Structure probing data (2A3) for a 207-nucleotide construct.
It was measured as part of the RMDB library RSTRND.
For 2A3 the reverse transcriptase was SuperScript II with manganese.
The reactions ran in a buffer of 150 mM KOAc, 10 mM MgCl2 and 150 mM bicine (pH 8.5), at 24 C.
For 2A3, 1,726 sequencing reads were counted.

[RMDB]
RNA sequence: GGGAACGACUCGAGUAGAGUCGAAAAAGUAGCUUGACGUAGAUCCGCCUAGUCUCGUCCAUGGGCUAGAUACGGGUCCUAAAUGAAGUGGACUUGCGCUUAAGUACUGGCCUGGGUGCUUAAGAAGAGGAUUUACAGACUAGCGUUUUAAUGAAGCGUGAACUUACUUGUUCGCAAGUAAGUUCACAAAAGAAACAACAACAACAAC
Reactivity to 2A3 in 0.01 (KOAc 150mM, MgCl2 10mM, bicine 150mM(pH8.5), 24C), signal-to-noise 3, nucleotides 027 to 156: a000g130u140a030g000c060u050u160g040a080c020g060u060a030g010a030u000c000c000g010c000c010u010a010g010u010c040u040c100g020u020c050c010a060u090g000g000g000c000u010a000g000a030u120a180c020g000g000g010u020c000c030u100a140a170a150u220g160a190a020g050u050g000g000a020c000u060u290g000c030g000c030u000u000a000a000g000u000a000c000u040g050g040c010c000u010g050g000g000u000g000c000u010u000a000a000g010a000a000g030a030g010g010a000u160u030u100a030c000a000g030a000c010u040a010g030c020g010u060u040u010u120a180a180u140g120a080a000g050c030